The record gives the reactivity of an RNA of 177 nucleotides to 2A3 and DMS. The 2A3 profile rests on 3,144 reads. 2A3 adducts were read by reverse transcription with SuperScript II with manganese.

RNA sequence: GGGAACGACUCGAGUAGAGUCGAAAAGCAUUAACAAGAAUUGAUGAUAGAUUAAUACAUGGGCAAGUUAUUACUGCUUGGUGUAAGAUUACAUCAGCAAAAAGGAUAGUAAUCGUGGAUGAUUUAGCCUACCGUAUGGGUUCGCCCAUACGGUAGGAAAAGAAACAACAACAACAAC
Reactivity to 2A3 in 0.01 (KOAc 150mM, MgCl2 10mM, bicine 150mM(pH8.5), 24C), signal-to-noise 5, nucleotides 027 to 126: g030c010a060u110u220a100a090c110a100a180g210a230a130u120u070g010a030u050g060a070u080a180g080a060u100u120a050a090u060a090c020a030u060g000g070g000c060a100a010g010u100u110a170u150u190a100c030u000g010c040u050u100g160g030u050g000u030a060a040g000a080u010u030a000c000a000u000c000a010g110c070a010a020a000a150a040g190g010a020u080a090g030u030a030a070u070c050g020u150g100g040a180u140g020a040u090u080u070a060g010
Reactivity to DMS in 0.01 (KOAc 150mM, MgCl2 10mM, bicine 150mM(pH8.5), 24C), signal-to-noise 3, nucleotides 027 to 126: g010c060a060u010u020a060a100c140a100a110g040a130a140u000u010g000a020u000g000a050u050a100g000a100u010u040a100a110u010a050c060a020u000g020g020g000c050a020a090g000u000u040a090u040u030a120c060u000g000c000u010u020g040g050u010g000u000a030a110g010a090u010u020a050c010a020u010c000a050g020c180a020a020a030a080a060g010g010a010u000a090g000u000a010a010u020c010g000u020g000g020a080u020g000a120u020u010u000a070g000
The reactions ran in a buffer of 150 mM KOAc, 10 mM MgCl2 and 150 mM bicine (pH 8.5), at 24 C. Values cover nucleotides 27 to 126.